[RMDB]
Overview
Structure probing data (2A3 and DMS) for a 207-nucleotide construct. DMS adducts were read by reverse transcription with MarathonRT.
RNA sequence: GGGAACGACUCGAGUAGAGUCGAAAACUAUCGUUCGCGAUAGACUGACGCGUACUACCACCCACUCCCACCCAGCUUGGACCUAACGUCCCAAAUAGGACGUUAGCUAGCUGGUGGGAAAUACGGUGGUAUCGCACCUACAGAGGUUCGCCUCUAAGUAUCGUCAAUUUUUCGAAAUUGACGAUACAAAAGAAACAACAACAACAAC
Reactivity to 2A3 in 0.01 (KOAc 150mM, MgCl2 10mM, bicine 150mM(pH8.5), 24C), signal-to-noise 4, nucleotides 027 to 156: c000u000a010u000c010g070u060u070c280g000c020g090a020u020a010g040a060c100u110g050a050c050g050c000g030u100a150c040u000a000c010c000a000c000c010c000a040c060u000c020c000c000a060c040c050c040a020g010c020u130u170g040g100a160c040c020u010a000a000c000g010u020c000c030c010a160a300a050u210a110g000g000a000c000g000u000u000a010g000c000u000a000g000c010u000g000g000u000g000g000g000a050a000a000u100a010c020g000g010u020g000g000u010a010u040c010g000c000a080c000c000u040a040c040a020g010a010g050g030u050u060c140g070c100c000u010c030u030a110a030
Reactivity to DMS in 0.01 (KOAc 150mM, MgCl2 10mM, bicine 150mM(pH8.5), 24C), signal-to-noise 1, nucleotides 027 to 156: c000u010a000u000c020g010u000u020c280g110c080g030a010u000a000g020a260c080u010g000a090c130g020c070g000u000a090c090u000a020c010c000a060c010c010c070a200c190u000c000c000c000a020c070c000c040a070g040c000u010u020g150g000a110c290c000u000a020a050c010g000u020c070c020c010a060a190a190u000a040g050g020a080c010g000u000u000a000g020c000u000a000g000c010u020g000g000u000g020g000g020a010a000a000u000a110c060g020g130u020g030g030u050a010u000c050g000c000a080c000c050u010a180c080a050g020a070g050g020u000u000c130g080c020c020u000c020u000a050a300
2A3 adducts were read by reverse transcription with SuperScript II with manganese. The RNA was probed in 150 mM KOAc, 10 mM MgCl2 and 150 mM bicine (pH 8.5) at 24 C.